Source: RMDB library OK1LIB, as collected in RNAgym. This 177-nucleotide RNA was probed chemically with 2A3. For 2A3, 698 sequencing reads were counted.
RNA sequence: GGGAACGACUCGAGUAGAGUCGAAAAGUGGCAGCGAAAUAGUUUCAUUCCUAUUGGCAAGUGUAAAAUGAACCUUUUCUGCAUGUAAGAAGGAUCCUGCUAGAGUUUCGCUCCCAACACUGCUAUACGCGCAUCUACAGUUCGCUGUAGAUGCGCGAAAAGAAACAACAACAACAAC
Reactivity to 2A3 in 0.01 (KOAc 150mM, MgCl2 10mM, bicine 150mM(pH8.5), 24C), signal-to-noise 2, nucleotides 027 to 126: g180u110g010g000c010a000g000c020g000a000a030a030u240a060g030u110u000u000c010a030u000u050c000c050u180a250u030u040g040g040c040a110a070g090u050g010u240a130a080a000a020u020g000a000a000c000c000u000u000u000u000c030u080g030c160a300u130g040u190a080a070g050a080a040g300g060a010u000c000c000u000g000c000u010a020g000a000g000u000u240u050c000g000c000u020c000c000c000a000a000c020a020c020u080g030c070u110a040u040a280